[RMDB]
RNA sequence: GGGAACGACUCGAGUAGAGUCGAAAACAGGUGGGCAGAUGCUAGAGUGUACUCAGACCAUCAAGCUCUAAAGUCCUUCAAAGAUUUUGCAUCGGGGAAACGAUCACAAAUCGGGCUCGUUGAGGUGUGGUCUCGUUCUGUUCGCAGAACGAGACCAAAAAGAAACAACAACAACAAC
Reactivity to 2A3 in 0.01 (KOAc 150mM, MgCl2 10mM, bicine 150mM(pH8.5), 24C), signal-to-noise 1, nucleotides 027 to 126: c060a000g030g030u050g040g170g050c050a110g040a040u060g020c000u020a000g000a000g110u060g000u090a180c100u060c000a000g030a020c000c000a040u010c030a030a050g000c000u000c000u070a010a020a000g060u010c000c000u160u000c000a080a160a030g020a000u000u010u060u300g020c100a000u060c020g000g000g000g080a050a070a120c000g000a040u220c070a000c020a000a110a000u020c040g000g000g000c080u090c030g030u120u100g100a000g100g020u090g050